Structure probing data (DMS and 2A3) for a 207-nucleotide construct. Source: RMDB library RNAMAK, as collected in RNAgym. The RNA was probed in 150 mM KOAc, 10 mM MgCl2 and 150 mM bicine (pH 8.5) at 24 C.
RNA sequence: GGGAACGACUCGAGUAGAGUCGAAAAUUCCAUGUAUUCGUACAUGGAAAAAAAAACCUUUGUGUCAUUGUCAGCGAAUCACUGGGCCCAUUGGGCCUGUGAUGUCGCUUGGAUUUAUGACACUCUGGUAAAAAACAACUGGUUUCGACCAGUUGAAGCUCUACAAUGAAUUCGUUCAUUGUAGAGCAAAAGAAACAACAACAACAAC
Reactivity to DMS in 0.01 (KOAc 150mM, MgCl2 10mM, bicine 150mM(pH8.5), 24C), signal-to-noise 1, nucleotides 027 to 156: u000u000c010c000a000u000g010u000a020u000u030c300g050u000a000c010a010u000g030g000a000a010a000a020a050a090a090a170a000c000c010u000u000u000g000u030g030u000c010a020u000u010g020u010c030a030g010c010g010a160a030u000c000a020c020u010g090g040g040c010c020c010a300u010u000g100g070g020c000c000u010g020u010g030a010u010g000u000c020g020c020u010u000g010g010a030u000u000u000a040u000g000a050c000a000c000u000c000u000g010g030u010a020a070a100a140a110a110c000a030a010c020u010g020g040u020u000u010c280g010a020c000c000a010g020u000u000g000a050a120
Reactivity to 2A3 in 0.01 (KOAc 150mM, MgCl2 10mM, bicine 150mM(pH8.5), 24C), signal-to-noise 2, nucleotides 027 to 156: u020u020c000c000a000u000g010u010a040u040u090c230g020u000a000c010a010u000g000g000a000a000a000a000a000a000a000a000a000c030c000u020u010u010g000u010g000u010c000a010u000u040g020u010c000a000g020c010g000a000a000u000c010a010c100u180g000g020g010c000c030c050a200u120u300g020g000g020c000c000u010g000u000g000a000u010g080u020c000g000c000u010u040g000g000a000u040u220u300a040u010g000a000c000a010c000u000c010u000g000g020u050a130a120a060a060a000a000c010a000a000c000u000g040g000u030u080u140c190g050a000c010c010a000g000u000u010g000a010a000